Notes:
Structure probing data (DMS and 2A3) for a 177-nucleotide construct. The RNA was probed in 150 mM KOAc, 10 mM MgCl2 and 150 mM bicine (pH 8.5) at 24 C. The data come from the RNA Mapping Database (RMDB), library OK1LIB. The 2A3 profile rests on 34,371 reads.
RNA sequence: GGGAACGACUCGAGUAGAGUCGAAAACAGCUACGCAAUUGUCCCCGAAUUGCCACGUAAAGCGUGCGGUCACAAUUAUGCUACAGGUAGCAUAAUCUUGUCGGCUACUGCCGACACCGUCGUAGCCUCUUGCCUUCGGCUUCGGUCGGAGGCAAGAAAAAGAAACAACAACAACAAC
Reactivity to DMS in 0.01 (KOAc 150mM, MgCl2 10mM, bicine 150mM(pH8.5), 24C), signal-to-noise 7, nucleotides 027 to 126: c100a150g000c010u010a010c030g010c010a030a010u010u010g010u010c000c000c000c020g010a040a030u010u000g000c050c020a020c040g000u010a080a110a130g010c010g010u000g000c000g000g010u010c180a110c160a120a000u000u000a000u000g000c000u010a050c110a140g020g030u000a010g000c000a010u000a000a000u000c080u010u010g000u000c000g000g000c000u030a100c250u020g010c000c000g010a010c010a010c030c000g000u010c010g000u000a010g000c000c080
Reactivity to 2A3 in 0.01 (KOAc 150mM, MgCl2 10mM, bicine 150mM(pH8.5), 24C), signal-to-noise 9, nucleotides 027 to 126: c020a000g000c000u020a010c010g000c010a010a020u020u030g080u110c000c000c000c000g020a010a020u010u020g010c010c010a020c010g040u060a030a030a030g100c000g000u020g000c000g000g000u040c020a020c010a040a020u000u000a000u000g000c000u020a020c030a080g150g120u030a000g000c000a000u000a000a000u000c050u040u070g000u000c000g000g000c010u110a090c090u260g000c000c000g000a000c000a000c000c000g020u020c010g000u010a010g000c000c010